[RMDB]
RNA sequence: GGGAACGACUCGAGUAGAGUCGAAAACGGCGAAUCGAUUGUUGGCGGCCAGCAUCGACCCCGCCCGUCGCGGUGAGACGCUGUCCAUCGACGACUUCGUGCGGCUGCUGCGACGGUCCGGCGGCUCGGGAAUGGCUAUUUUCGAAUAGCCAUUCCCAAAAGAAACAACAACAACAAC
Reactivity to 2A3 in 0.01 (KOAc 150mM, MgCl2 10mM, bicine 150mM(pH8.5), 24C), signal-to-noise 2, nucleotides 027 to 126: c000g090g020c030g030a030a060u060c060g080a140u000u200g060u060u060g090g020c050g030g050c050c000a020g000c000a040u110c030g030a100c000c020c010c000g030c020c080c050g000u000c000g030c050g010g010u090g300a090g010a000c030g010c170u100g000u010c030c000a210u190c080g240a210c060g020a000c000u180u130c130g070u160g000c030g030g000c000u010g050c000u020g000c020g010a010c000g010g010u030c020c020g030g060c080g020g020c050u000c070
Reactivity to DMS in 0.01 (KOAc 150mM, MgCl2 10mM, bicine 150mM(pH8.5), 24C), signal-to-noise 1, nucleotides 027 to 126: c110g000g000c040g020a090a070u000c010g020a150u010u010g010u000u010g010g020c020g000g000c040c020a030g020c090a060u010c020g040a120c030c050c010c010g000c300c010c040g010u010c010g020c010g010g050u000g010a090g000a010c010g020c080u010g020u000c010c080a050u010c150g000a130c130g020a040c060u000u010c130g000u000g000c020g000g000c020u000g020c020u010g000c000g010a040c010g010g010u000c070c020g010g010c070g000g030c090u000c070